[RMDB]
RNA sequence: GGGAACGACUCGAGUAGAGUCGAAAAUGUUAGUGAAGACAAUGAGGACUACUUGCAGAGAACCUAUGGUGUCAAGAGCACGCAGUACUGUUUUCGGCUUGGGAAGAAGCACAUUUACUGUCGGAACCCAUCUAUUCGUAUUCGUACGAAUAGAUGGAAAAGAAACAACAACAACAAC
Reactivity to DMS in 0.01 (KOAc 150mM, MgCl2 10mM, bicine 150mM(pH8.5), 24C), signal-to-noise 9, nucleotides 027 to 126: u010g010u000u000a060g020u010g000a100a100g010a050c050a050a160u010g010a130g000g010a080c040u000a060c050u000u000g010c060a050g010a280g010a070a070c050c040u010a080u010g010g020u010g010u000c050a050a090g010a090g000c070a050c080g010c050a030g000u000a050c120u010g010u010u000u000u000c060g010g010c030u000u010g010g010g020a100a100g010a060a060g010c070a050c080a050u010u010u000a070c100u000g010u000c040g000g000a130a140c160
Reactivity to 2A3 in 0.01 (KOAc 150mM, MgCl2 10mM, bicine 150mM(pH8.5), 24C), signal-to-noise 9, nucleotides 027 to 126: u090g010u040u030a080g030u030g160a080a020g050a030c040a070a120u130g020a080g070g020a010c020u060a030c000u080u070g000c050a010g030a010g020a110a030c000c010u060a140u150g080g010u050g040u050c040a080a030g030a020g080c040a010c060g020c010a000g020u060a050c040u060g060u060u000u020u080c020g020g000c030u030u060g070g030g020a060a090g040a040a010g080c040a020c010a080u100u130u120a080c060u050g060u080c020g010g040a040a030c000